[RMDB]
RNA sequence: GGGAACGACUCGAGUAGAGUCGAAAAACGGACUACGGUCCGAAGGGUUCGGGGUACUAGUGUGAAUGCCCGGCUAGUACCCUGUGCUAGUGGUUUAUCUACUGAUGUUCAAUUAAGGGCAUUUGAACCUGAGGGAAGUCUUCGGACUUCCCUCAGGAAAAGAAACAACAACAACAAC
Reactivity to 2A3 in 0.01 (KOAc 150mM, MgCl2 10mM, bicine 150mM(pH8.5), 24C), signal-to-noise 1, nucleotides 027 to 126: a000c000g000g030a000c000u000a000c080g180g000u030c070c000g000a040a030g170g000g010u060u090c000g010g010g000g010u000a000c000u010a000g000u000g000u040g070a040a040u000g000c000c040c000g000g000c000u000a000g000u000a000c000c000c000u000g000u000g120c000u040a080g000u000g200g000u100u260u210a200u140c020u000a000c000u000g030a060u120g120u080u080c040a040a040u300u200a240a300g000g000g010c000a000u050u000u000g070a000a020